[RMDB]
RNA sequence: GGGAACGACUCGAGUAGAGUCGAAAACUUAGUGAGUUCGCUCACUAAGGGACUCUGCAACCCAGGCUGGAGAGGGACCAAGUAGGAGGCUGGGCACCACCAACAUUCAGCGCUUCGGCGCUGAAAACGUUUUAUUAAGGUUCGCCUUAAUAAAACGAAAAGAAACAACAACAACAAC
Reactivity to DMS in 0.01 (KOAc 150mM, MgCl2 10mM, bicine 150mM(pH8.5), 24C), signal-to-noise 5, nucleotides 027 to 126: c000u000u000a000g010u000g010a030g010u000u010c210g030c000u000c000a000c010u010a000a010g000g000g000a070c050u000c020u000g010c050a110a110c050c020c020a100g010g010c040u000g000g000a060g010a080g000g010g000a080c050c040a070a090g020u010a080g010g020a080g010g020c070u000g010g000g020c050a080c040c040a090c080c070a060a080c140a150u010u000c010a000g010c000g020c010u000u010c180g030g020c000g020c000u000g000a010a010a100a170
Reactivity to 2A3 in 0.01 (KOAc 150mM, MgCl2 10mM, bicine 150mM(pH8.5), 24C), signal-to-noise 4, nucleotides 027 to 126: c000u000u000a000g000u010g010a010g020u030u120c180g070c130u000c000a010c000u000a000a000g000g000g010a010c010u020c010u050g000c010a040a100c000c010c010a020g080g000c030u040g020g030a060g010a050g060g030g020a020c010c030a070a020g030u030a040g070g100a020g040g000c030u030g020g020g000c020a030c020c010a020c000c020a030a060c010a060u030u030c000a010g000c010g000c030u060u080c220g110g000c010g000c010u000g000a000a000a000a000